About this RNA: Conditions: 150 mM KOAc, 10 mM MgCl2 and 150 mM bicine (pH 8.5), 24 C. The record gives the reactivity of an RNA of 207 nucleotides to 2A3 and DMS. For DMS, 4,466 sequencing reads were counted. 2A3 adducts were read by reverse transcription with SuperScript II with manganese. Values cover nucleotides 27 to 156.
[RMDB]
RNA sequence: GGGAACGACUCGAGUAGAGUCGAAAAACGUAUGCGACUACCGGCCCAGGCACGACUAAUGGCGUCUGGAACGGCACAUUUAAGUCAGCUUGGACAAACAAUCCAGCAUGGGUGUUCUAUGACAUUGUUACCAAUGAUCGAUUUGGCCUAGGUAAUAGACCAUCUUAUACUUCGGUAUAAGAUGGUCAAAAGAAACAACAACAACAAC
Reactivity to 2A3 in 0.01 (KOAc 150mM, MgCl2 10mM, bicine 150mM(pH8.5), 24C), signal-to-noise 4, nucleotides 027 to 156: a000c070g060u120a130u130g020c040g050a040c040u050a020c040c010g000g010c000c000c010a020g020g000c010a020c140g080a030c060u110a090a010u080g030g030c080g020u000c010u040g110g040a090a050c090g010g040c030a010c000a040u110u150u080a110a040g020u050c010a020g010c020u060u070g000g020a040c070a040a140a000c020a030a040u040c010c020a000g000c010a120u060g030g000g010u050g020u030u010c040u080a080u100g020a040c010a040u040u090g050u120u100a040c040c000a030a040u110g030a200u070c060g060a060u050u030u140g030g000c020c010u030a080g030g020u060a070a040u100a130
Reactivity to DMS in 0.01 (KOAc 150mM, MgCl2 10mM, bicine 150mM(pH8.5), 24C), signal-to-noise 3, nucleotides 027 to 156: a110c090g020u000a100u000g010c020g010a160c020u000a070c010c010g000g020c030c000c020a060g020g050c040a080c030g020a120c040u010a110a030u020g010g010c160g020u000c000u020g020g010a110a020c070g010g030c000a030c030a080u000u010u000a050a060g020u000c000a270g000c010u010u000g000g010a070c030a050a100a070c060a080a300u000c010c010a060g000c030a090u000g010g020g020u000g010u000u010c060u000a100u000g020a090c110a080u000u000g020u010u000a070c030c010a040a130u010g000a150u000c060g000a230u000u010u000g000g010c020c000u000a110g020g000u000a070a080u010a160
It was measured as part of the RMDB library OK3TST.